[RMDB]
RNA sequence: GGGAACGACUCGAGUAGAGUCGAAAACAUCCACUGCUACGGCAGUGGAUGAACGAGGUAGGUACGCCUACCUCGAAAGUGGGAUGUUUGCAUAGACAUUAAACGUCCAUGGUACGCCAUGGACGAAGUAAUUAAAUAUCUUCGGAUAUUUAAUUACAAAAGAAACAACAACAACAAC
Reactivity to DMS in 0.01 (KOAc 150mM, MgCl2 10mM, bicine 150mM(pH8.5), 24C), signal-to-noise 5, nucleotides 027 to 126: c010a020u000c000c000a010c010u000g010c000u000a110c210g030g020c000a010g040u000g010g010a000u000g000a030a110c030g010a020g000g010u000a000g000g020u000a100c300g030c000c000u000a000c000c000u000c010g010a020a030a070g020u010g010g010g000a040u000g010u010u010u000g020c180a090u010a080g010a040c050a030u010u000a060a090a190c020g000u000c000c000a010u000g000g010u000a100c270g030c010c000a010u000g000g000a010c000g000a010a060
Reactivity to 2A3 in 0.01 (KOAc 150mM, MgCl2 10mM, bicine 150mM(pH8.5), 24C), signal-to-noise 4, nucleotides 027 to 126: c000a010u000c000c010a010c010u010g000c000u010a070c220g150g010c000a000g000u020g000g000a000u000g000a000a010c010g000a000g010g000u010a010g000g030u030a000c170g070c020c000u000a000c000c000u000c000g000a010a010a000g150u190g030g120g020a040u020g060u080u050u120g130c130a140u150a160g040a040c020a020u080u160a110a130a070c030g000u000c000c000a010u000g020g000u030a040c230g050c050c000a010u000g000g000a000c000g000a000a000

The record gives the reactivity of an RNA of 177 nucleotides to DMS and 2A3. The data come from the RNA Mapping Database (RMDB), library OK2TRN. 2A3 adducts were read by reverse transcription with SuperScript II with manganese. The 2A3 profile rests on 6,248 reads.